[RMDB]
RNA sequence: GGGAACGACUCGAGUAGAGUCGAAAAUACAGCGCCCAACGCUUCACAACCUGAAAGAAGCGCCUGUUAUCAGGACGGUUGAUCCAUUUACCGGUGCAGACCUCUGCAAACACCGGGUUGCAGAACAUAGAGGGAAAUUUGUUCGCAAAUUUCCCAACACCUUUCGUAAGUUCGCUUACGAAAGGUGAAAAGAAACAACAACAACAAC
Reactivity to DMS in 0.01 (KOAc 150mM, MgCl2 10mM, bicine 150mM(pH8.5), 24C), signal-to-noise 1, nucleotides 027 to 156: u020a140c030a050g020c080g000c050c010c020a100a130c040g000c040u000u000c000a150c040a120a270c130c060u000g000a100a000a210g000a090a040g030c040g050c010c070u020g020u010u010a220u020c170a050g060g000a090c060g090g020u000u000g030a180u040c040c050a120u000u000u000a150c000c000g050g050u010g010c000a160g010a140c070c120u000c000u030g010c020a050a110a040c000a050c050c000g000g000g030u010u000g000c020a090g020a080a080c040a060u000a120g040a220g010g010g000a060a020a050u010u000u000g010u000u040c230g050c000a010a020a050u000u000u000c000c000c010a080a070
Reactivity to 2A3 in 0.01 (KOAc 150mM, MgCl2 10mM, bicine 150mM(pH8.5), 24C), signal-to-noise 1, nucleotides 027 to 156: u180a030c070a030g090c040g060c070c000c000a020a020c000g010c000u000u000c050a060c010a060a020c000c000u000g000a040a000a000g000a010a010g000c000g000c000c000u040g030u140u140a140u300c000a020g020g000a000c030g010g010u010u000g030a100u070c090c010a030u000u040u260a150c000c000g000g060u070g060c050a000g090a290c000c150u130c040u120g020c060a030a070a010c050a030c000c000g050g000g000u010u110g000c040a010g030a150a020c020a040u140a050g110a170g000g000g020a000a000a000u010u000u000g050u060u050c060g010c180a010a010a000u000u000u000c010c000c010a000a000